Chemical mapping of a 177-nucleotide RNA with DMS and 2A3. Values cover nucleotides 27 to 126. The data come from the RNA Mapping Database (RMDB), library OK2TRN. Conditions: 150 mM KOAc, 10 mM MgCl2 and 150 mM bicine (pH 8.5), 24 C. The 2A3 profile rests on 26,069 reads. For 2A3 the reverse transcriptase was SuperScript II with manganese.
RNA sequence: GGGAACGACUCGAGUAGAGUCGAAAAUUCUGUGGAAUCACCCCAUCCAACGUGUGAUCCACAAUGAGCUAGAGCAGUACUGUCGAGCUCGUGCUGGCCGCUGCCUCGAAGUGGGUGCCCACCCACGGACUAUAAAGGGGUUCGCCCCUUUAUAGUCAAAAGAAACAACAACAACAAC
Reactivity to DMS in 0.01 (KOAc 150mM, MgCl2 10mM, bicine 150mM(pH8.5), 24C), signal-to-noise 9, nucleotides 027 to 126: u000u000c100u000g030u000g000g010a070a110u000c010a030c010c060c040c150a100u010c230c180a110a100c180g000u000g020u000g000a030u000c000c010a020c020a050a060u000g000a060g010c100u000a090g010a070g010c010a040g010u010a110c120u000g010u000c030g000a060g020c010u000c120g020u010g010c010u000g000g010c030c190g000c040u000g010c080c030u000c060g010a090a120g020u000g000g000g010u000g010c010c010c010a300c010c000c010a010c030g020
Reactivity to 2A3 in 0.01 (KOAc 150mM, MgCl2 10mM, bicine 150mM(pH8.5), 24C), signal-to-noise 9, nucleotides 027 to 126: u100u030c030u030g010u020g030g030a110a200u020c000a010c020c050c020c020a070u160c090c030a090a080c080g050u070g000u010g050a010u000c000c010a010c020a010a110u170g020a020g050c080u110a030g010a020g050c020a020g020u100a110c070u100g050u080c070g150a010g010c020u040c130g050u240g000c010u020g010g020c010c010g010c040u020g020c010c020u020c020g030a150a030g000u010g000g010g020u050g050c000c000c000a030c000c000c000a000c010g030
The DMS profile rests on 18,347 reads.